[RMDB]
RNA sequence: GGGAACGACUCGAGUAGAGUCGAAAAGAAGAGAAUACGGUGUAAGAACAGCCCAACUUACACCGUGCGGCAUAACGGAAACAAUGAUGUCGAAAUUUGGGCUGAUCGUGAAUGAACGAAAGAAGAAACCGGGACUGGUAUUCGUACCAGUCCCGGUAAAAGAAACAACAACAACAAC
Reactivity to 2A3 in 0.01 (KOAc 150mM, MgCl2 10mM, bicine 150mM(pH8.5), 24C), signal-to-noise 1, nucleotides 027 to 126: g030a040a060g270a070g000a010a050u190a000c000g010g030u000g000u000a000a000g010a300a050c000a020g000c000c000c000a000a050c000u010u010a000c000a040c000c000g030u000g000c000g000g000c000a010u080a040a030c150g000g110a300a000a000c050a000a040u300g050a010u000g010u000c000g000a010a210a000u080u180u160g000g000g000c000u000g030a050u000c010g000u070g200a250a230u140g030a150a050c000g000a100a000a140g200a010a000g050a030a230